[RMDB]
The record gives the reactivity of an RNA of 207 nucleotides to 2A3. Values cover nucleotides 27 to 156. The 2A3 profile rests on 975 reads. The RNA was probed in 150 mM KOAc, 10 mM MgCl2 and 150 mM bicine (pH 8.5) at 24 C.

RNA sequence: GGGAACGACUCGAGUAGAGUCGAAAAACGGAUGGUACGCCAUCCGACCAUUGGGUACAAGCGUUCAAUCAGCACCGUGACGGUGCAGAUGGGAAAUUGCCCAUGAUACGCACCAUACGUGGUGCGAAAAAGCCAUCGGUGUUCGCACCGAUGGCAACGUUACACCGUUGUUCGCAACGGUGUAACGAAAAGAAACAACAACAACAAC
Reactivity to 2A3 in 0.01 (KOAc 150mM, MgCl2 10mM, bicine 150mM(pH8.5), 24C), signal-to-noise 2, nucleotides 027 to 156: a010c020g000g000a000u000g010g010u110a100c210g090c030c000a000u050c020c030g010a020c010c030a070u050u100g040g000g020u030a030c000a100a060g100c050g050u040u050c050a070a110u000c020a030g020c000a000c030c000g160u270g140a170c300g020g000u000g000c000a010g010a000u010g040g000g000a000a060a020u040u040g040c000c000c000a030u070g090a010u050a070c020g010c000a010c000c000a010u070a070c300g150u090g010g000u000g020c000g030a020a010a000a000a000g000c010c000a000u000c000g000g000u000g050u050u060c130g020c070a000c000c000g000a000u000g000g000c000a000a000